[RMDB]
RNA sequence: GGGAACGACUCGAGUAGAGUCGAAAACGGUUACGCCUUCUUUACCGUUAUCAAGGAAGGUACUCGGCCAUGCUAAGGGAAGCAUUAUUCCUUUGGCGCAUGUCGCCGCCAGCAUGGUGUGAGGGGAAAAAGUAUGCUGGGUUCGCCCAGCAUACAAUCAUUCUCCCAACUUCGGUUGGGAGAAUGAAAAAGAAACAACAACAACAAC
Reactivity to 2A3 in 0.01 (KOAc 150mM, MgCl2 10mM, bicine 150mM(pH8.5), 24C), signal-to-noise 4, nucleotides 027 to 156: c000g000g010u010u020a030c080g030c000c010u010u020c010u020u020u050a040c020c020g210u090u100a020u080c060a000a010g040g000a000a010g000g000u050a050c010u010c010g030g000c000c000a010u000g010c030u090a100a120g030g000g010a040a010g030c100a250u120u150a110u100u150c010c010u070u040u090g020g000c010g000c030a100u170g130u220c050g020c050c010g010c050c050a000g010c010a000u010g000g020u080g180u230g030a030g000g030g020g070a000a130a000a000a060g010u000a000u000g000c000u000g000g010g040u020u050c160g130c040c010c030a000g000c000a000u000a010c000a010a000
Reactivity to DMS in 0.01 (KOAc 150mM, MgCl2 10mM, bicine 150mM(pH8.5), 24C), signal-to-noise 1, nucleotides 027 to 156: c030g020g000u000u010a040c000g070c010c000u000u000c000u010u010u000a020c000c000g040u000u010a030u000c090a040a040g010g010a040a100g000g030u000a020c040u000c050g000g020c000c000a040u000g020c000u010a200a120g000g010g030a010a050g000c190a190u010u030a250u050u010c000c000u000u010u000g000g070c030g020c050a060u000g040u010c030g060c050c010g000c120c040a040g040c000a060u000g000g050u000g020u010g000a020g000g030g010g000a070a090a040a070a210g030u000a000u000g010c010u000g000g070g000u000u000c300g030c010c010c000a020g030c010a000u010a000c000a030a110